[RMDB]
RNA sequence: GGGAACGACUCGAGUAGAGUCGAAAAUUUAUGUAACUGUUGAACCACAGGAUCGUUGGGAUGUGGACACCACAUCCACAAUACUUACGGAUAAUCAAAACAUAACUAGAACGAGAUUUAAUCGCAGAUCAACCAUGCCCACAUCGUAUCGGUCAUCCACCACAUGUUCGUUCGCGAACAUGUGGUGAAAAGAAACAACAACAACAAC
Reactivity to 2A3 in 0.01 (KOAc 150mM, MgCl2 10mM, bicine 150mM(pH8.5), 24C), signal-to-noise 1, nucleotides 027 to 156: u030u070u030a020u000g080u020a000a070c030u020g080u060u090g120a060a060c020c000a010c020a010g000g110a110u170c060g020u100u080g000g000g130a070u000g000u000g060g010a190c060a120c110c080a000c010a020u000c020c020a030c080a000a000u140a030c020u080u010a010c060g000g070a010u040a160a010u090c080a000a070a000a050c060a130u140a040a010c060u090a010g000a090a010c100g010a010g070a170u030u040u280a090a080u010c040g000c140a000g030a070u040c080a030a020c040c020a020u060g040c000c000c000a120c030a030u040c070g010u080a070u090c020g010g020u030c060a030u100c020